[RMDB]
RNA sequence: GGGAACGACUCGAGUAGAGUCGAAAAUGUUGGCCCCUUAAAGGUUCGUGAGGUAAAGUUGGGUGGACUAAACUGAACUUUUGCAAAUUUAUAACUUCGAUGGGGUUUGUCUGCUUAAGCCAACCGCAUCAUAGCUGGUGUUCGCACCAGCUAUGAUAAAAGAAACAACAACAACAAC
Reactivity to DMS in 0.01 (KOAc 150mM, MgCl2 10mM, bicine 150mM(pH8.5), 24C), signal-to-noise 2, nucleotides 027 to 126: u000g000u020u010g030g010c010c040c010c110u000u020a100a090a090g020g020u010u010c070g000u020g010a120g010g020u000a040a070a080g030u000u000g010g010g020u000g020g000a110c040u000a050a110a020c080u020g000a060a030c030u000u010u020u010g020c130a050a040a090u010u010u000a080u010a090a060c020u000u000c080g020a060u000g000g000g000g010u000u000u000g010u010c030u000g010c040u000u000a100a080g010c010c050a040a040c050c160g030c120
Source: RMDB library OK2TST, as collected in RNAgym. Structure probing data (DMS) for a 177-nucleotide construct. The RNA was probed in 150 mM KOAc, 10 mM MgCl2 and 150 mM bicine (pH 8.5) at 24 C. Reactivities are given for positions 27 through 126.